[RMDB]
RNA sequence: GGGAACGACUCGAGUAGAGUCGAAAAGAAAGGGAACGACUAGAGUAGAGUCGAAAAGACGCUCAACUCAUGGAGCGCAAGACGAAUAGCUACAUAUUCGACAUGAGGGCGCCGUUCAAGAAGGAGACACUGAGUAUCGUUUCGACGAUACUCAGUGAAAAGAAACAACAACAACAAC
Reactivity to 2A3 in 0.01 (KOAc 150mM, MgCl2 10mM, bicine 150mM(pH8.5), 24C), signal-to-noise 4, nucleotides 027 to 126: g060a040a030a010g110g010g020a070a040c010g030a010c030u040a090g010a010g130u110a010g020a020g050u050c030g030a010a060a000a030g040a060c010g010c010u010c020a040a130c000u020c050a010u080g050g010a050g030c070g000c120a050a030g090a040c020g000a020a010u010a040g020c130u120a020c030a130u030a010u010u020c020g010a020c040a020u060g020a030g020g050g000c040g000c010c010g050u030u070c030a040a050g050a030a040g110g030a060g010a020
Reactivity to DMS in 0.01 (KOAc 150mM, MgCl2 10mM, bicine 150mM(pH8.5), 24C), signal-to-noise 3, nucleotides 027 to 126: g000a010a110a100g000g000g020a060a190c000g000a060c010u020a010g020a090g010u000a080g020a080g020u020c020g000a060a050a120a080g000a170c020g030c010u000c010a080a060c040u010c050a060u010g000g000a040g000c030g030c080a080a070g010a080c020g010a010a000u010a030g040c210u060a080c170a100u000a010u020u010c020g000a150c030a040u010g000a030g000g000g010c060g000c020c030g000u000u020c030a130a070g020a090a120g030g020a100g020a210
The data come from the RNA Mapping Database (RMDB), library OK1LIB. Chemical mapping of a 177-nucleotide RNA with 2A3 and DMS.